[RMDB]
RNA sequence: GGGAACGACUCGAGUAGAGUCGAAAAGAUAUGGAAGUAUGAUGACCGAUAUGAUCGAUGAAAUCGGAAACGAUGGAGAUCUAUCGCAAGUACUUCCUAAGUCAAAACACACUGUUCGCAGUGUGAACUGCUUUUGAUCGUUCGCGAUCAAAAGCAGAAAAGAAACAACAACAACAAC
Reactivity to 2A3 in 0.01 (KOAc 150mM, MgCl2 10mM, bicine 150mM(pH8.5), 24C), signal-to-noise 1, nucleotides 027 to 126: g030a020u050a000u170g000g000a000a040g000u030a030u030g190a300u200g070a090c090c110g010a000u010a020u230g010a010u000c050g080a190u030g040a020a030a010u030c000g010g060a060a000a000c010g010a000u030g020g050a010g000a000u000c000u010a010u000c000g000c030a140a250g040u010a000c010u000u000c010c010u000a100a030g000u000c010a020a060a070a030c010a020c000a000c020u030g080u110u000c240g020c180a020g000u000g010u030g060a050a040
Reactivity to DMS in 0.01 (KOAc 150mM, MgCl2 10mM, bicine 150mM(pH8.5), 24C), signal-to-noise 1, nucleotides 027 to 126: g000a060u020a300u010g000g020a000a000g000u000a000u000g000a140u020g020a260c300c030g020a010u000a010u020g020a000u060c000g020a090u040g000a190a100a010u000c010g000g000a130a090a060c000g040a040u010g000g000a120g000a030u000c010u000a000u000c000g000c040a030a100g020u000a020c010u000u000c020c010u000a040a110g020u000c000a030a030a150a230c000a010c010a010c060u000g000u000u010c190g030c050a000g030u000g000u000g000a020a120